RNA sequence: GGGAACGACUCGAGUAGAGUCGAAAAUGUACAACUCACCAUAAUGUAGAAUCAGUGGGAGCCCUGAGCUUGUUUUCCUGCAACUAGAUGGUCCCAGCUGGGGGUGACGGGAGACGGUGACAGAUCAUCAGGCAUUAGAUUCUCAUGAGGAGCAUGAGAUUUAUUUAGGCUUCGGCCUAAAUAAAUCAAAAGAAACAACAACAACAAC
Reactivity to 2A3 in 0.01 (KOAc 150mM, MgCl2 10mM, bicine 150mM(pH8.5), 24C), signal-to-noise 4, nucleotides 027 to 156: u100g020u030a070c030a100a110c050u040c030a130c030c020a070u080a240a070u130g070u070a020g050a070a060u050c020a020g040u050g020g090g060a070g020c020c020c030u030g040a020g010c030u120u180g060u060u050u130u070c020c020u040g000c020a060a040c030u070a040g030a160u070g050g090u000c020c010c010a020g020c090u110g000g000g030g000g050u030g040a060c050g020g000g000a030g010a020c030g020g010u010g020a040c030a040g050a050u070c020a020u020c010a040g040g000c000a010u010u040a060g020a070u080u000c010u010c010a010u050g010a040g080g010a020g030c040a020u070g050a020
Reactivity to DMS in 0.01 (KOAc 150mM, MgCl2 10mM, bicine 150mM(pH8.5), 24C), signal-to-noise 2, nucleotides 027 to 156: u010g000u010a100c020a060a100c020u000c020a100c020c020a130u000a110a140u010g020u010a120g010a100a100u010c050a080g000u000g000g000g020a160g000c050c030c020u010g010a300g020c060u020u000g010u040u000u000u000c020c060u020g020c060a060a060c020u000a080g010a140u000g000g030u000c030c040c010a180g030c030u000g010g010g000g050g030u000g000a070c070g040g010g020a110g000a060c050g010g030u000g010a130c070a070g000a090u000c050a080u010c040a060g020g030c040a090u000u000a120g020a070u000u010c010u000c000a070u010g010a090g000g000a180g020c020a040u000g000a230